[RMDB]
RNA sequence: GGGAACGACUCGAGUAGAGUCGAAAAGAAAGAGAGUUAGACACGGUUGAUCUCACCCUUCGGGGGGGCUAUAGAGAUCACUGGAAGCACUACCGGACAACCGGAACAUUGCAGCAAUGCUGCCCAAAAAAUCCAAACAUCUUCGGAUGUUUGGAAACACACCUGUUCUGUUCGCAGAACAGGUGUGAAAAGAAACAACAACAACAAC
Reactivity to 2A3 in 0.01 (KOAc 150mM, MgCl2 10mM, bicine 150mM(pH8.5), 24C), signal-to-noise 1, nucleotides 027 to 156: g150a010a060a010g110a000g020a010g070u180u050a050g060a030c080a000c210g030g020u180u140g010a020u040c000u000c000a040c000c000c000u060u180c160g080g010g050g000g000g000g000c060u190a110u100a300g000a000g000a000u000c000a000c000u030g010g030a050a000g070c030a020c070u050a040c000c000g000g000a030c050a150a120c040c000g000g010a040a000c040a020u040u150g010c000a000g020c000a000a160u170g020c000u000g020c000c020c000a070a120a020a020a050a000u000c000c000a020a000a000c010a000u000c000u080u030c180g160g000a000u000g000u000u000u000g000g000a000a000a000